[RMDB]
RNA sequence: GGGAACGACUCGAGUAGAGUCGAAAAGUAGAACAGAAAGCACGUGAUAUCGCGGAUGUAAUCUUGGAAAUCGGUAGUGUGCCGGUUCACGCCGAAAGUUACAUUAUGCGAUUCCCAAAUGGCCGUCGUCUUUCGCAUAUUGGCCUACGUAGCACCGGUCUGCGUAUCUGUUCGCAGAUACGCAGACAAAAGAAACAACAACAACAAC
Reactivity to 2A3 in 0.01 (KOAc 150mM, MgCl2 10mM, bicine 150mM(pH8.5), 24C), signal-to-noise 2, nucleotides 027 to 156: g030u040a050g020a120a050c100a010g100a090a150a010g060c030a040c060g040u050g030a130u040a010u170c000g000c000g050g000a020u000g010u000a040a080u260c080u050u120g210g030a050a090a100u020c000g000g000u060a290g080u110g060u080g130c000c010g020g010u060u150c050a000c060g000c000c000g050a040a050a010g000u030u020a000c000a000u010u100a080u200g000c020g000a000u000u000c000c000c000a020a080a000u030g020g000c030c000g000u070c080g000u020c160u030u120u040c070g040c020a020u080a120u100u220g050g000c000c000u020a020c020g040u040a020g060c060a010c060c030g050